[RMDB]
RNA sequence: GGGAACGACUCGAGUAGAGUCGAAAACGGGGAGGUAGCGGUGCCCUGUACUCGCAAUCCGCUAUAGCGGGGCCGAAUUCCCACUCGAGGUGGGACGACUUUAUGGUCUGACUUAAGGGAUUGGUGUCACAGGGUUUACAUUCGUGUAAACCCUGUGAAAAGAAACAACAACAACAAC
Reactivity to 2A3 in 0.01 (KOAc 150mM, MgCl2 10mM, bicine 150mM(pH8.5), 24C), signal-to-noise 4, nucleotides 027 to 126: c010g000g000g000g000a030g010g030u070a010g040c030g010g010u040g040c020c000c010u010g060u060a060c030u010c000g060c020a000a030u020c030c010g000c170u030a030u040a020g020c060g000g020g020g000c000c000g040a010a030u190u020c000c010c020a000c020u070c100g170a080g020g210u010g000g000g010a000c000g030a030c030u060u100u110a180u300g030g000u000c010u010g030a110c020u100u060a050a050g020g000g030a040u000u060g080g010u070g030u020
Reactivity to DMS in 0.01 (KOAc 150mM, MgCl2 10mM, bicine 150mM(pH8.5), 24C), signal-to-noise 2, nucleotides 027 to 126: c090g050g020g000g000a140g000g010u000a050g010c050g000g010u020g020c030c010c000u000g030u000a110c030u040c030g000c030a060a050u010c000c010g030c010u000a080u000a060g020c100g010g010g000g010c050c030g000a100a060u010u010c000c000c000a020c020u000c190g000a150g070g020u000g000g010g030a070c300g010a100c130u000u020u030a070u030g010g000u000c030u000g000a190c080u000u020a080a050g000g000g000a110u010u020g010g020u000g020u000

The record gives the reactivity of an RNA of 177 nucleotides to 2A3 and DMS. The RNA was probed in 150 mM KOAc, 10 mM MgCl2 and 150 mM bicine (pH 8.5) at 24 C. The data come from the RNA Mapping Database (RMDB), libraries RFM100 and RFMREP.